[RMDB]
RNA sequence: GGGAACGACUCGAGUAGAGUCGAAAAUAGGCUUACUUCGGUAAGCCUACAUGGAAAAGGCUAGGACCGGCCAGACAAAGGUCCGAAAACAAAUAUUUAAAAAACCCGAAAGCUUCGGCUUUCGGAAGUUAUACUUUAGUUUCGACUAAAGUAUAACAAAAGAAACAACAACAACAAC
Reactivity to DMS in 0.01 (KOAc 150mM, MgCl2 10mM, bicine 150mM(pH8.5), 24C), signal-to-noise 1, nucleotides 027 to 126: u020a030g010g030c000u000u000a000c000u000u020c210g040g010u000a000a030g000c020c000u000a000c090a060u000g000g000a120a100a210a140g000g000c000u000a070g010g020a000c020c000g000g020c030c010a070g010a040c300a020a070a150g040g010u010c020c000g000a080a060a040a060c080a000a150a180u020a040u000u040u010a010a040a110a110a200a060c260c000c000g010a000a000a000g000c010u000u000c250g030g000c000u000u000u000c010g000g030a000a000
Reactivity to 2A3 in 0.01 (KOAc 150mM, MgCl2 10mM, bicine 150mM(pH8.5), 24C), signal-to-noise 2, nucleotides 027 to 126: u020a000g010g000c000u010u000a000c010u000u020c180g060g000u010a000a000g000c010c000u010a010c010a060u110g050g030a040a130a080a190g000g000c000u060a050g030g010a010c000c020g000g000c000c030a040g050a050c130a050a190a030g000g000u010c000c000g000a030a030a000a000c010a030a150a030u250a180u220u300u300a080a230a080a020a000a020c020c050c010g000a000a000a000g000c030u070u200c300g070g000c000u010u000u000c010g000g000a000a000